[RMDB]
RNA sequence: GGGAACGACUCGAGUAGAGUCGAAAAGAGCGCUGUCCCGAACAACUCGGUGCCUGUCAGAAGGAUCAGCGCACUGGCCGCUAUCCAGGCCGUCAGGCGUGCCGGGGAUAUCACGACGCCGAAUGUCACAAGGCAGAUACUUCGGUAUCUGCCUUGUAAAAGAAACAACAACAACAAC
Reactivity to DMS in 0.01 (KOAc 150mM, MgCl2 10mM, bicine 150mM(pH8.5), 24C), signal-to-noise 2, nucleotides 027 to 126: g000a150g020c020g020c030u000g050u000c010c020c010g000a030a100c150a110a120c020u000c000g000g020u010g010c000c000u000g020u000c030a050g000a300a140g010g000a010u000c190a030g010c000g040c050a170c190u000g000g030c160c040g000c040u000a050u010c010c000a040g010g000c270c120g000u000c030a010g010g020c030g020u020g000c020c050g040g010g000g030a090u000a120u000c080a090c070g010a110c030g010c010c040g010a120a040u020g000u000c110
Reactivity to 2A3 in 0.01 (KOAc 150mM, MgCl2 10mM, bicine 150mM(pH8.5), 24C), signal-to-noise 1, nucleotides 027 to 126: g100a010g030c060g020c030u060g000u010c010c010c010g000a040a020c140a020a050c010u010c020g050g000u110g030c000c030u040g010u000c020a050g020a040a000g090g040a030u100c160a000g000c010g010c000a090c070u060g140g020c100c000g000c010u000a000u010c000c010a050g070g000c000c010g030u000c010a000g010g000c000g040u150g040c040c010g010g040g040g030a010u030a030u080c140a040c040g110a050c020g040c010c030g100a130a100u270g070u140c020